Annotation:
Source: RMDB library OK1LIB, as collected in RNAgym. The record gives the reactivity of an RNA of 177 nucleotides to 2A3. 2A3 adducts were read by reverse transcription with SuperScript II with manganese.
RNA sequence: GGGAACGACUCGAGUAGAGUCGAAAAUGCACGUCACCGUCGGGCAGCACGCGCAGCAGCACGCUCUCGCCGGCCUGCAACACGCCCAUCGCCGCCUUGCGGACCGAGUUCUGCGCGCAGUGGCCGCGGCCGCACACCGAUUCGUCGGUGUGCGGCCAAAAGAAACAACAACAACAAC
Reactivity to 2A3 in 0.01 (KOAc 150mM, MgCl2 10mM, bicine 150mM(pH8.5), 24C), signal-to-noise 1, nucleotides 027 to 126: u080g000c070a080c060g030u040c080a030c100c000g070u120c000g060g000g030c070a000g000c030a020c020g010c040g050c040a140g070c020a000g060c040a010c080g080c000u050c000u030c000g060c010c000g020g000c000c000u020g030c040a000a060c030a000c090g040c010c000c050a080u110c090g000c040c000g050c010c040u030u080g000c010g000g040a130c100c010g090a060g060u040u050c000u030g030c060g000c000g000c030a020g040u080g110g030c010c000g000c000